[RMDB]
RNA sequence: GGGAACGACUCGAGUAGAGUCGAAAAGUGAAUGGGUGAAGUGCUCAGAGGAGGAAAGUUGAAGUUUUCAUGUAAACUAAGUAGCCACACUCAAAGCUGAGUUACUAACAGAGACUAUCAAGGUACAUGCUGAAGUCUGGAAGAGAACAGCAGCCCACCAUUACCGGGGUUUCGACCCCGGUAAUGGAAAAGAAACAACAACAACAAC
Reactivity to 2A3 in 0.01 (KOAc 150mM, MgCl2 10mM, bicine 150mM(pH8.5), 24C), signal-to-noise 1, nucleotides 027 to 156: g090u080g050a040a030u090g000g000g000u020g090a110a000g000u070g020c000u030c070a000g050a130g080g000a020g000g100a080a040a100g040u000u020g030a080a000g000u040u060u150u100c080a120u200g070u100a020a050a030c000u020a110a000g050u000a000g120c050c010a080c050a050c120u040c010a110a130a020g090c020u000g000a010g070u070u170a020c080u080a110a030c000a000g020a000g000a060c020u100a120u270c030a030a040g000g000u060a050c040a050u090g000c020u060g090a070a020g010u000c050u020g000g000a040a010g020a020g090a120a000c050a070g020c000a000g000c000c000c000a010